[RMDB]
RNA sequence: GGGAACGACUCGAGUAGAGUCGAAAAGGCGUAUGCUCUCAGCUUGUUGACAGAUGAUAUUCAUGAAUUAAAUCGCAAACCUAGUUAAUUCCUUCAAGUUUGAGCCUGGGUAUGUCAGCUACAUAGGUCUGCGUGAAGGAUUCGUCCUUCACGCAGAAAAAGAAACAACAACAACAAC
Reactivity to DMS in 0.01 (KOAc 150mM, MgCl2 10mM, bicine 150mM(pH8.5), 24C), signal-to-noise 1, nucleotides 027 to 126: g040g000c030g000u000a060u040g000c000u000c000u000c030a050g060c060u000u000g000u000u000g020a250c280a120g000a040u010g030a170u040a030u000u000c050a030u000g030a080a000u010u000a040a120a060u010c140g000c150a060a100a270c090c060u000a080g000u000u000a010a150u000u000c020c040u000u000c050a030a050g000u000u010u000g000a020g000c300c100u000g000g000g040u010a010u000g000u000c030a080g030c120u010a010c080a110u000a030g050g010